Source: RMDB library OK2TST, as collected in RNAgym. The record gives the reactivity of an RNA of 177 nucleotides to DMS and 2A3. For DMS the reverse transcriptase was MarathonRT.
RNA sequence: GGGAACGACUCGAGUAGAGUCGAAAACAGAAAUAGCCAGUCUGAAGGACGAAAACGCUGCCCUGAAGGACACCUCGCCGUCAGCACAGGCGGUGACCGAUCGGAUGGCGAAAAUGCUUCGACUCGCCUGUAACUCAUCGUUCGCGAUGAGUUACAGAAAAGAAACAACAACAACAAC
Reactivity to DMS in 0.01 (KOAc 150mM, MgCl2 10mM, bicine 150mM(pH8.5), 24C), signal-to-noise 2, nucleotides 027 to 126: c020a100g000a120a050a190u000a250g010c020c010a060g000u000c010u000g010a050a050g000g010a080c110g000a120a150a130a090c030g020c030u000g040c030c000c010u000g050a070a220g000g000a060c060a050c070c130u010c070g030c010c020g000u010c030a040g000c300a030c190a080g000g020c030g000g020u000g010a080c020c010g010a100u010c230g000g000a070u000g010g010c020g020a050a040a090a050u000g010c080u000u000c000g000a020c000u000c230g000c090
Reactivity to 2A3 in 0.01 (KOAc 150mM, MgCl2 10mM, bicine 150mM(pH8.5), 24C), signal-to-noise 1, nucleotides 027 to 126: c010a000g120a010a060a040u210a030g000c000c010a020g050u010c040u130g000a040a010g020g060a060c150g060a060a040a000a050c030g020c040u030g000c030c010c010u070g050a090a060g010g010a030c020a080c050c020u050c090g030c010c010g000u070c030a060g160c170a110c020a120g000g020c040g010g000u010g010a060c000c000g010a060u110c000g000g000a030u050g010g000c000g000a070a000a000a000u040g010c000u030u000c000g010a000c000u000c000g030c010